[RMDB]
This 170-nucleotide RNA was probed chemically with 2A3 and DMS. The 2A3 profile rests on 3,496 reads. The RNA was probed in 150 mM KOAc, 10 mM MgCl2 and 150 mM bicine (pH 8.5) at 24 C.
RNA sequence: GGGAACGACUCGAGUAGAGUCGAAAACUACAGCGGCAGGGAGUCUCUAAUAUUCCCAUCGGGAACCUAUUACUGUGUCACCACUAAGGCUAAGUCCGUUCAACAAGAUCUUGACGUUAUUUUGCCUACAGGGGUUCGUUCGCGAACCCCAAAAGAAACAACAACAACAAC
Reactivity to 2A3 in 0.01 (KOAc 150mM, MgCl2 10mM, bicine 150mM(pH8.5), 24C), signal-to-noise 3, nucleotides 027 to 129: c020u060a030c010a000g010c000g030g010c010a030g000g000g080a060g030u000c000u000c000u060a110a090u010a050u140u030c020c000c000a010u110c030g010g000g020a030a070c020c030u030a090u130u160a120c070u060g030u030g020u100c000a100c050c000a050c010u040a020a000g010g040c010u020a020a020g000u040c000c000g020u020u040c000a060a050c030a070a020g080a160u060c020u040u090g000a000c000g020u010u020a070u030u050u020u060g020c000c020u040a020c040a040
Reactivity to DMS in 0.01 (KOAc 150mM, MgCl2 10mM, bicine 150mM(pH8.5), 24C), signal-to-noise 3, nucleotides 027 to 129: c080u040a110c070a010g080c030g080g160c110a030g070g000g000a120g030u000c020u070c030u000a050a060u120a140u070u000c010c050c030a020u000c000g000g000g000a090a060c130c010u030a040u010u080a050c070u020g030u000g070u000c030a060c130c050a000c020u060a140a010g000g020c070u000a140a050g030u050c090c060g130u020u020c070a020a130c140a110a130g000a150u060c070u000u020g090a050c110g000u000u000a090u010u000u010u120g000c020c030u010a030c130a060